RNA sequence: GGGAACGACUCGAGUAGAGUCGAAAAGAACGGAACCAUUGGCAACCACUGUCAUUGAACUUGAAUGCAUGGAAUUCCAGUUGGCCUCCAGGGAUGUUCCUGGAACUCCAACUUUUCCAAAUUGGGGCGAUCAAAUAGGAUUCGUCCUAUUUGAUCGAAAAGAAACAACAACAACAAC
Reactivity to 2A3 in 0.01 (KOAc 150mM, MgCl2 10mM, bicine 150mM(pH8.5), 24C), signal-to-noise 9, nucleotides 027 to 126: g060a060a020c070g010g020a020a030c010c000a040u040u090g080g000c010a050a040c040c030a080c110u050g040u090c050a130u070u190g080a100a070c050u060u100g060a110a020u090g060c060a040u040g020g060a110a100u120u010c040c010a020g000u010u020g030g000c010c010u000c000c000a000g080g030g040a300u240g140u270u140c000c000u000g000g000a010a020c030u000c010c000a000a010c000u060u030u040u000c030c000a040a060a140u100u160g020g000g020g010
Reactivity to DMS in 0.01 (KOAc 150mM, MgCl2 10mM, bicine 150mM(pH8.5), 24C), signal-to-noise 7, nucleotides 027 to 126: g000a110a100c160g000g000a070a050c020c010a020u010u020g020g000c060a050a100c190c050a050c160u000g020u020c020a100u010u020g010a080a090c080u010u020g020a080a150u010g000c050a080u000g000g000a050a100u020u010c060c070a050g020u000u000g000g000c300c110u010c000c000a020g000g010g020a180u020g020u050u040c010c010u000g000g000a020a040c080u010c000c000a010a030c020u010u010u000u000c010c010a030a090a110u020u020g000g000g010g010

This 177-nucleotide RNA was probed chemically with 2A3 and DMS. For DMS the reverse transcriptase was MarathonRT. It was measured as part of the RMDB library OK1LIB. Values are in units of 0.01, from 0 to 300, in steps of 10.